[RMDB]
RNA sequence: GGGAACGACUCGAGUAGAGUCGAAAAAAAGGAUUUGAGGUAAUGGAUUGAUAAUGGAGAGGGGUGAUUACUCUUUAACCUCACUUUGAAAGCUGAUGAGUUAACCAGGUGAAGAGUUCAGAGGCAGAGCCCUACUGCCCAGCUCUGUCAUGUACCAACGUUUUACUAAUUUCGAUUAGUAAAACGUAAAAGAAACAACAACAACAAC
Reactivity to DMS in 0.01 (KOAc 150mM, MgCl2 10mM, bicine 150mM(pH8.5), 24C), signal-to-noise 3, nucleotides 027 to 156: a040a040a050g020g000a110u000u000u000g020a150g010g020u000a040a120u000g000g000a100u000u000g010a110u000a060a080u000g010g010a070g010a080g010g010g040g030u000g010a110u010u000a050c020u010c030u000u010u000a120a090c020c010u000c020a070c120u000u010u010g000a090a060a090g010c060u000g010a120u000g000a100g020u000u000a080a110c070c050a060g020g030u010g020a090a030g010a100g020u000u010c070a080g030a180g040g010c000a030g010a060g010c020c030c030u010a080c040u000g020c020c000c010a100g010c010u000c000u060g010u010c020a010u000g000u000a110c070c020a120
Reactivity to 2A3 in 0.01 (KOAc 150mM, MgCl2 10mM, bicine 150mM(pH8.5), 24C), signal-to-noise 3, nucleotides 027 to 156: a000a010a000g040g010a060u090u040u050g020a020g000g020u080a080a020u080g020g030a040u040u140g010a030u050a170a050u120g030g000a030g010a020g020g010g000g000u020g020a040u020u070a050c000u000c000u050u090u060a030a020c000c000u010c020a040c020u120u070u130g150a160a140a010g040c030u040g000a100u040g010a080g050u030u030a070a050c070c050a030g000g020u020g020a040a040g020a010g030u060u080c060a040g020a080g090g000c000a000g000a000g030c000c020c030u050a080c030u050g000c000c030c010a000g000c000u010c000u000g060u030c010a020u090g010u050a060c020c030a070